[RMDB]
Conditions: 150 mM KOAc, 10 mM MgCl2 and 150 mM bicine (pH 8.5), 24 C. Structure probing data (2A3 and DMS) for a 177-nucleotide construct.
RNA sequence: GGGAACGACUCGAGUAGAGUCGAAAAGCGGUGGCGAGCAGCUGACUCACACCAGGCAGAAGGCUCUUGCUGCACCAGUUGCUUGCGCCACUAAAGUUGCUGCAAAGCAAAGCCAGAGCCUGCAGCAGUGCUAUACUUUGUUCGCAAAGUAUAGCACAAAAGAAACAACAACAACAAC
Reactivity to 2A3 in 0.01 (KOAc 150mM, MgCl2 10mM, bicine 150mM(pH8.5), 24C), signal-to-noise 3, nucleotides 027 to 126: g080c070g000g040u050g050g000c040g000a010g000c000a010g010c030u030g030a070c020u070c100a080c010a050c050c020a040g110g000c010a020g010a180a050g070g000c010u010c020u070u060g030c010u010g000c020a100c040c020a040g010u020u010g010c000u010u070g050c020g010c010c000a000c010u030a020a060a050g110u120u050g010c030u020g010c000a040a090a090g040c000a080a150a030g020c020c010a020g010a000g060c030c000u020g010c010a010g000c010a020
Reactivity to DMS in 0.01 (KOAc 150mM, MgCl2 10mM, bicine 150mM(pH8.5), 24C), signal-to-noise 4, nucleotides 027 to 126: g030c100g000g010u000g010g020c030g020a020g010c010a070g020c020u010g000a210c170u000c100a070c130a080c120c130a080g010g000c030a060g010a160a110g000g000c020u010c040u010u000g020c030u000g010c060a100c130c010a020g000u000u000g010c000u000u000g010c040g000c000c010a030c010u000a070a100a120g000u000u000g010c010u010g010c010a040a080a160g030c080a070a060a080g010c060c050a060g010a100g000c020c020u000g000c020a040g010c010a070
About this RNA: The DMS profile rests on 3,593 reads. For 2A3, 5,011 sequencing reads were counted. DMS adducts were read by reverse transcription with MarathonRT. 2A3 adducts were read by reverse transcription with SuperScript II with manganese. The data come from the RNA Mapping Database (RMDB), library OK2TST.